[RMDB]
This 177-nucleotide RNA was probed chemically with 2A3. It was measured as part of the RMDB library OK1LIB. The RNA was probed in 150 mM KOAc, 10 mM MgCl2 and 150 mM bicine (pH 8.5) at 24 C.
RNA sequence: GGGAACGACUCGAGUAGAGUCGAAAAAGACGAGAACAAGCGGCUGGUAAAGCAGACUCAGGAUCUGCAGUCAUCGUCCGCCCAGAGCUCCGGCCUGGGGGCCAGUCUCACCGAGAGCAUUAUCAGCCUCACGCCACGACUUCGGUCGUGGCGUGAGAAAAGAAACAACAACAACAAC
Reactivity to 2A3 in 0.01 (KOAc 150mM, MgCl2 10mM, bicine 150mM(pH8.5), 24C), signal-to-noise 1, nucleotides 027 to 126: a000g000a010c050g060a050g010a040a060c080a190a000g070c070g070g000c040u030g000g020u100a110a090a050g000c010a000g020a030c110u190c300a120g100g080a300u040c000u040g010c000a050g070u080c000a080u070c020g010u000c000c040g130c050c000c000a020g000a030g020c000u000c000c050g030g000c000c010u110g000g000g000g050g050c000c000a070g020u020c000u030c020a000c000c020g140a150g010a010g190c070a000u000u120a000u030c010a000g060c000